[RMDB]
RNA sequence: GGGAACGACUCGAGUAGAGUCGAAAAGAAUCGAUUGAAUUACGACCAUAUCAGCAGGAGCUGGUCGAAGCAGCAUGUCGAGGAAUGAACACAAUCAUCUGUGCUCCCACUGGUUCGGGAAAAACUGCAUCGUAAUGCCGUUCGCGGCAUUACGAUGAAAAGAAACAACAACAACAAC
Reactivity to 2A3 in 0.01 (KOAc 150mM, MgCl2 10mM, bicine 150mM(pH8.5), 24C), signal-to-noise 3, nucleotides 027 to 126: g060a030a060u080c040g060a080u060u160g020a050a090u130u110a070c030g000a010c020c020a030u060a060u240c080a050g210c100a040g150g080a020g040c050u040g010g060u000c010g000a020a000g020c060a000g010c040a030u120g030u030c020g020a040g000g150a100a140u130g080a040a000c060a000c000a060a130u160c040a040u010c070u030g060u020g050c040u010c000c000c000a000c000u050g070g000u010u060c040g060g090g000a030a010a000a050a050c030u120g000
Reactivity to DMS in 0.01 (KOAc 150mM, MgCl2 10mM, bicine 150mM(pH8.5), 24C), signal-to-noise 2, nucleotides 027 to 126: g000a300a160u010c070g000a030u070u050g000a040a050u000u040a100c000g010a020c090c040a060u040a080u050c010a260g000c300a070g000g000a020g020c010u000g010g000u000c030g000a160a110g010c110a090g040c070a050u060g030u000c000g000a020g000g030a030a030u000g000a050a040c070a180c130a020a100u020c100a050u000c080u000g010u020g030c090u000c000c050c010a110c170u000g000g080u010u000c070g000g060g010a020a000a020a120a170c110u040g000
An RNA of 177 nucleotides, treated with 2A3 and DMS and read out base by base. The data come from the RNA Mapping Database (RMDB), library OK1LIB. Reactivities are given for positions 27 through 126. DMS adducts were read by reverse transcription with MarathonRT.